[RMDB]
Structure probing data (2A3 and DMS) for a 170-nucleotide construct.
The RNA was probed in 150 mM KOAc, 10 mM MgCl2 and 150 mM bicine (pH 8.5) at 24 C.
It was measured as part of the RMDB library 15KLIB.

RNA sequence: GGGAACGACUCGAGUAGAGUCGAAAAUAACAAUCUAACUGCACCUAGAAAUUCUUGGGAGGCUAUGGCUCUGAACUUUAAGUUAAUAGGUAUUGGCGGUACACCUUGUAUAAAGGUUGCUGCUAUGAAGGUUAACGCUUCGGCGUUAACAAAAGAAACAACAACAACAAC
Reactivity to 2A3 in 0.01 (KOAc 150mM, MgCl2 10mM, bicine 150mM(pH8.5), 24C), signal-to-noise 7, nucleotides 027 to 129: u130a020a030c080a040a060u060c030u110a020a120c050u050g040c060a040c020c020u020a030g110a070a120a020u150u050c030u060u080g040g010g000a020g040g000c040u080a050u160g060g000c010u010c010u050g040a040a080c050u050u080u130a070a000g020u020u100a130a060u050a110g090g000u070a060u100u150g030g000c000g000g000u030a030c080a010c090c000u030u020g060u090a140u230a270a070a010g000g000u000u000g000c010u000g000c020u000a040u060g020a040a020g090
Reactivity to DMS in 0.01 (KOAc 150mM, MgCl2 10mM, bicine 150mM(pH8.5), 24C), signal-to-noise 3, nucleotides 027 to 129: u020a070a130c140a130a080u040c000u020a050a070c090u020g010c090a080c070c030u030a020g010a060a090a080u070u000c020u000u000g020g010g000a130g030g030c050u020a050u000g030g040c040u030c020u000g020a120a070c110u040u040u020a080a110g020u010u040a020a080u040a080g030g000u020a070u000u000g000g000c000g000g000u020a040c200a030c000c010u000u000g030u000a130u000a070a010a000g000g050u000u000g030c020u000g000c000u040a020u030g000a020a060g020